RNA sequence: GGGAACGACUCGAGUAGAGUCGAAAAUAAUCGUAAGGACUCAGAAGGGUUUUGAGCGGAAGCCACUCAGAAGUAAACAACGAAUCGAAAUGGAAGAGAAGGUCAUUCUGGCCAUCACACAGAACUCCCUAGUUAGAUGCUUCGGCAUCUAACUAGGAAAAGAAACAACAACAACAAC
Reactivity to DMS in 0.01 (KOAc 150mM, MgCl2 10mM, bicine 150mM(pH8.5), 24C), signal-to-noise 2, nucleotides 027 to 126: u010a180a210u000c050g010u010a070a180g000g010a070c070u000c100a110g010a080a060g020g020g030u000u000u000u000g020a070g050c040g010g000a080a070g010c040c010a070c090u000c020a040g000a000a030g040u020a080a080a090c150a070a080c140g000a050a110u000c020g000a130a070a120u010g010g020a120a110g020a150g000a090a090g010g020u000c080a120u000u000c140u010g010g010c000c020a050u010c080a120c060a160c110a040g000a030a100c190u010c040
Reactivity to 2A3 in 0.01 (KOAc 150mM, MgCl2 10mM, bicine 150mM(pH8.5), 24C), signal-to-noise 2, nucleotides 027 to 126: u020a000a020u050c020g020u020a050a080g020g040a010c000u010c020a040g020a100a040g080g000g000u040u020u080u070g050a030g000c040g020g010a030a010g030c010c010a060c030u050c010a020g050a100a010g080u240a090a130a100c030a030a040c040g060a000a060u140c030g000a090a060a000u070g050g030a070a000g030a040g000a160a030g030g000u010c020a060u160u010c120u080g020g000c020c010a020u040c010a040c000a010c000a020g040a070a030c040u010c030